[RMDB]
RNA sequence: GGGAACGACUCGAGUAGAGUCGAAAAAUAGAAAAAAUAGCUUAAAACCUCUAUAUUUAGAUGUCUUUGGUGCAGAUAAAGUAUUGGGAGACAAUAGCUACUUAUUUGGUUUUGAUAAAAAUGGAAACUAUUAGGAGGAGUUCGCUCCUCCUAAUAGAAAAGAAACAACAACAACAAC
Reactivity to DMS in 0.01 (KOAc 150mM, MgCl2 10mM, bicine 150mM(pH8.5), 24C), signal-to-noise 1, nucleotides 027 to 126: a080u020a100g000a010a090a090a050a190a100u000a060g010c030u000u020a090a120a180a150c030c000u010c050u000a000u000a060u010u000u000a000g000a100u000g010u000c000u020u030u020g010g020u020g040c000a030g030a090u000a080a000a070g000u000a030u000u000g020g000g020a060g010a030c110a050a120u020a060g020c020u000a010c050u000u010a090u000u000u000g010g010u000u000u000u000g000a100u000a060a050a020a100a040u000g000g000a120a100a170
Notes
Chemical mapping of a 177-nucleotide RNA with DMS. It was measured as part of the RMDB library OK2TST. Reactivities are given for positions 27 through 126. Conditions: 150 mM KOAc, 10 mM MgCl2 and 150 mM bicine (pH 8.5), 24 C.